Structure probing data (2A3 and DMS) for a 177-nucleotide construct. The data come from the RNA Mapping Database (RMDB), libraries RFM100 and RFMREP. The RNA was probed in 150 mM KOAc, 10 mM MgCl2 and 150 mM bicine (pH 8.5) at 24 C. DMS adducts were read by reverse transcription with MarathonRT.

RNA sequence: GGGAACGACUCGAGUAGAGUCGAAAAAGCGUCUACGGACGCAGCUCUGAGAAGCGUAGCUCUUCACUCGGUAGCUCUGUGUUUAUCUGAUCAAAGCUGCCAGAUGAAGAGCUGUGCUUCCAGGGAAAACUAUUGUCUGUUUCGACAGACAAUAGUUAAAAGAAACAACAACAACAAC
Reactivity to 2A3 in 0.01 (KOAc 150mM, MgCl2 10mM, bicine 150mM(pH8.5), 24C), signal-to-noise 9, nucleotides 027 to 126: a010g000c000g000u000c000u020a050c280g120g000a000c000g000c000a020g020c000u000c000u010g300a300g000a060a000g000c000g010u010a000g000c000u000c000u000u000c000a020c030u010c060g000g000u010a000g000c000u000c020u020g070u010g150u090u170u150a290u120c150u190g140a050u100c020a030a010a000g000c000u000g000c000c010a020g000a030u000g000a000a000g000a000g000c000u000g000u000g000c000u000u000c000c000a000g000g010g000a040a160
Reactivity to DMS in 0.01 (KOAc 150mM, MgCl2 10mM, bicine 150mM(pH8.5), 24C), signal-to-noise 7, nucleotides 027 to 126: a080g010c010g010u000c000u000a110c190g020g000a010c000g020c000a060g010c010u000c000u000g000a150g000a010a010g010c000g010u000a010g010c000u000c000u000u000c000a020c040u000c230g010g000u000a000g010c000u000c050u000g000u010g010u010u020u020a110u070c250u030g000a080u010c010a010a020a010g010c000u000g010c010c010a020g010a180u000g000a010a010g000a000g010c000u000g010u000g000c010u000u000c000c000a020g000g000g010a060a050